The data come from the RNA Mapping Database (RMDB), library OK1LIB. Structure probing data (2A3 and DMS) for a 177-nucleotide construct. DMS adducts were read by reverse transcription with MarathonRT. For DMS, 4,750 sequencing reads were counted. Reactivities are given for positions 27 through 126.
RNA sequence: GGGAACGACUCGAGUAGAGUCGAAAACAGACGGCGGUCGGACCCGUUCAAUAUCGGGUCCUCGGCUCGUUCUAGGGCGGUGCUGGAAUAGCGCAGGGAGUAGAAGCCGGUAACCGGCGCGUACACCACAUCAGAGUCGAUUCGUCGACUCUGAUGUAAAAGAAACAACAACAACAAC
Reactivity to 2A3 in 0.01 (KOAc 150mM, MgCl2 10mM, bicine 150mM(pH8.5), 24C), signal-to-noise 4, nucleotides 027 to 126: c050a030g080a010c000g020g040c010g040g010u080c020g060g000a010c000c020c000g000u090u100c230a210a080u100a100u300c010g000g000g000u000c000c000u010c000g040g000c030u020c070g060u050u030c050u090a050g000g020g010c040g010g050u020g020c030u040g020g120a210a060u060a090g010c030g010c020a000g010g010g040a060g030u090a040g030a140a020g000c010c000g000g020u060a080a070c040c000g010g000c020g000c010g000u010a020c030a020c020c030
Reactivity to DMS in 0.01 (KOAc 150mM, MgCl2 10mM, bicine 150mM(pH8.5), 24C), signal-to-noise 3, nucleotides 027 to 126: c140a150g010a060c000g020g010c030g000g040u020c220g000g020a010c000c000c000g020u000u020c300a180a180u050a060u010c000g060g000g000u000c000c000u000c030g000g000c030u020c070g010u010u010c010u000a110g000g010g000c020g000g050u000g030c030u010g000g020a120a100u000a100g000c060g030c040a050g000g000g000a130g030u010a080g000a110a160g010c020c000g000g000u030a060a130c090c000g000g000c010g000c060g000u020a090c120a120c030c060
The RNA was probed in 150 mM KOAc, 10 mM MgCl2 and 150 mM bicine (pH 8.5) at 24 C.